An RNA of 207 nucleotides, treated with DMS and 2A3 and read out base by base. The 2A3 profile rests on 1,402 reads. Reactivities are rounded to 0.1 and cut off at 0 and 3. For DMS the reverse transcriptase was MarathonRT. For 2A3 the reverse transcriptase was SuperScript II with manganese.
[RMDB]
RNA sequence: GGGAACGACUCGAGUAGAGUCGAAAAGGUGCGUUCGCGCACCAUCUGGAUAUGGAAACUAUAGUUUCGUGGGACUGAUGACCAAGCGUCGGAAACGACGCUUGCAAGGUCCUCACGAAAGUAGUUUCCUAAGUCAUUGGGCCAGUUUCGACUGGAAAAAUACAGAUGACUUCGGUCAUCUGUAUUUAAAAGAAACAACAACAACAAC
Reactivity to DMS in 0.01 (KOAc 150mM, MgCl2 10mM, bicine 150mM(pH8.5), 24C), signal-to-noise 2, nucleotides 027 to 156: g080g030u000g030c040g000u000u000c300g040c030g000c000a000c010c000a060u010c060u000g030g020a150u000a240u000g000g010a030a010a030c000u000a020u000a100g010u000u000u000c010g040u010g030g010g010a080c000u000g010a120u000g000a190c300c010a020a000g000c000g010u000c000g000g000a100a170a260c010g020a010c030g000c000u010u000g050c030a070a180g000g000u000c010c010u020c040a010c020g000a000a030a060g000u010a010g010u000u000u000c000c010u030a010a050g010u000c060a180u020u000g010g030g020c000c030a080g000u000u010u010c150g030a090c020u010g030g000a000a080
Reactivity to 2A3 in 0.01 (KOAc 150mM, MgCl2 10mM, bicine 150mM(pH8.5), 24C), signal-to-noise 1, nucleotides 027 to 156: g040g000u020g000c030g050u080u180c270g010c010g040c120a010c020c000a020u060c110u060g070g000a020u030a030u140g010g000a000a010a000c000u020a020u080a230g250u010u000u020c000g010u000g020g010g000a010c000u030g040a140u130g010a180c060c020a000a000g000c000g000u000c000g000g040a050a070a010c020g000a000c000g000c020u010u010g010c010a040a070g000g000u000c000c020u030c010a000c000g000a000a000a000g010u000a000g010u000u000u000c000c000u000a020a000g000u010c020a090u110u240g090g070g010c020c020a020g000u050u080u180c240g110a030c010u000g000g000a020a140